Source information
This 177-nucleotide RNA was probed chemically with DMS and 2A3. It was measured as part of the RMDB library OK2TRN. For 2A3 the reverse transcriptase was SuperScript II with manganese. The reactions ran in a buffer of 150 mM KOAc, 10 mM MgCl2 and 150 mM bicine (pH 8.5), at 24 C.

RNA sequence: GGGAACGACUCGAGUAGAGUCGAAAAGCGGCACCGCAGCGAGCGAUCGUAGAAGCCGCGACCUCGGCCCAGUCGCACGCCCUGGCGGUCGACAGCCAGCGCCGGCACCAGCACCAAGCUGGCCUGCGAUCUCCAUUAGGUUCGCCUAAUGGAGAUCAAAAGAAACAACAACAACAAC
Reactivity to DMS in 0.01 (KOAc 150mM, MgCl2 10mM, bicine 150mM(pH8.5), 24C), signal-to-noise 4, nucleotides 027 to 126: g010c010g010g020c000a090c090c300g000c120a150g020c010g000a060g010c150g000a110u000c020g000u010a080g000a100a210g010c040c060g030c030g000a040c070c030u000c060g000g000c000c040c080a130g000u000c010g000c050a070c090g000c010c100c080u000g000g010c000g000g020u000c040g010a090c100a080g010c020c020a050g020c130g020c050c080g000g000c070a240c050c030a030g000c030a180c180c160a090a170g000c010u000g010g010c110c090u010g020c180
Reactivity to 2A3 in 0.01 (KOAc 150mM, MgCl2 10mM, bicine 150mM(pH8.5), 24C), signal-to-noise 1, nucleotides 027 to 126: g040c020g000g020c030a020c090c070g040c100a010g010c000g000a000g000c020g050a090u060c050g040u080a070g060a240a010g020c000c000g030c000g060a050c010c010u070c030g060g000c000c020c010a020g040u040c020g000c030a010c050g020c000c000c020u080g080g000c030g020g030u010c000g020a050c040a010g000c000c020a000g000c010g030c040c000g050g000c040a070c060c020a010g010c010a030c070c050a100a000g010c000u010g010g000c030c020u000g010c030